[RMDB]
RNA sequence: GGGAACGACUCGAGUAGAGUCGAAAAAGGAAACUAUGGAAGGGCCUUCUGUAAAUUCAGUCACCACCAAGAUGGUUUCAGGAUUAUUAGUUGUAUUACCAGUGACCCUGUUAGAAGGUAGCUAAAAACAACGUACUUGGUUCGCCAAGUACGUUGUAAAAGAAACAACAACAACAAC
Reactivity to DMS in 0.01 (KOAc 150mM, MgCl2 10mM, bicine 150mM(pH8.5), 24C), signal-to-noise 2, nucleotides 027 to 126: a120g000g000a050a090a080c040u000a090u000g000g010a080a040g010g000g000c100c010u000u000c010u000g020u020a030a030a090u000u000c050a040g020u010c070a070c020c010a070c070c060a110a110g020a160u010g000g010u000u010u030c020a060g000g000a020u000u000a060u010u000a050g010u020u000g010u010a080u010u010a030c060c040a030g000u000g010a110c020c020c010u000g000u000u000a060g000a090a020g000g020u000a120g000c100u010a010a050a070a140
Chemical mapping of a 177-nucleotide RNA with DMS. The data come from the RNA Mapping Database (RMDB), library OK2TRN.